[RMDB]
RNA sequence: GGGAACGACUCGAGUAGAGUCGAAAACACAACAAUGAAAGCAGUAUCUGCUAUUGUUCAAUCAUGGGAUUGGUACAGUGUCAACAUAAUUUAUGAAGACAAAGAUGCUUCAUCCAACAAAACAAAACAUGACCAUCGACUUCGGUCGAUGGUCAUGAAAAGAAACAACAACAACAAC
Reactivity to 2A3 in 0.01 (KOAc 150mM, MgCl2 10mM, bicine 150mM(pH8.5), 24C), signal-to-noise 2, nucleotides 027 to 126: c000a000c020a080a060c030a050a040u070g060a300a000a000g070c020a000g000u190a080u120c060u000g000c010u010a040u000u110g000u000u000c060a100a100u100c000a290u200g190g040g000a010u010u050g010g030u080a100c000a090g170u020g010u010c040a010a000c020a080u150a130a000u100u090u280a000u060g060a010a000g000a010c000a000a120a000g020a030u170g000c010u000u000c000a010u010c050c000a000a060c000a000a100a070a000c060a040a060a000a050